[RMDB]
RNA sequence: GGGAACGACUCGAGUAGAGUCGAAAAAGGUUCUGUUAGCGAGGGAUAGGCGCGAGGGUGGAGUGACUGCGCCGCCACAUGGCCUGUAUUUUGUCGAUGUUAAAUACCCGCAAAAGUAUCAGUUGCCGAUUCCAUGCAGUUUCGACUGCAUGGAAUCAAAAGAAACAACAACAACAAC
Reactivity to 2A3 in 0.01 (KOAc 150mM, MgCl2 10mM, bicine 150mM(pH8.5), 24C), signal-to-noise 1, nucleotides 027 to 126: a010g060g000u000u000c000u010g060u090u050a040g010c040g070a100g000g060g020a120u120a080g050g050c050g000c100g120a200g000g060g040u190g030g010a120g040u090g020a010c020u020g000c010g000c000c020g000c000c020a090c010a070u100g000g030c000c000u000g040u040a070u010u120u010u000g060u040c050g040a060u040g010u030u020a090a060a120u070a090c040c000c010g000c090a050a080a000a030g120u120a020u160c030a010g080u120u070g080c000c010
Reactivity to DMS in 0.01 (KOAc 150mM, MgCl2 10mM, bicine 150mM(pH8.5), 24C), signal-to-noise 2, nucleotides 027 to 126: a080g010g010u000u000c050u010g030u000u000a120g020c070g000a090g000g010g010a090u000a050g000g000c040g010c120g000a120g010g000g000u000g010g000a120g020u000g000a020c060u000g010c060g020c030c010g020c030c020a050c120a090u000g030g030c010c020u000g000u000a060u000u010u000u000g010u010c070g000a080u000g000u000u010a060a090a100u010a150c010c070c030g030c160a050a050a020a030g000u000a050u000c020a020g000u010u010g040c060c070
This 177-nucleotide RNA was probed chemically with 2A3 and DMS. The RNA was probed in 150 mM KOAc, 10 mM MgCl2 and 150 mM bicine (pH 8.5) at 24 C. Source: RMDB library OK2TST, as collected in RNAgym.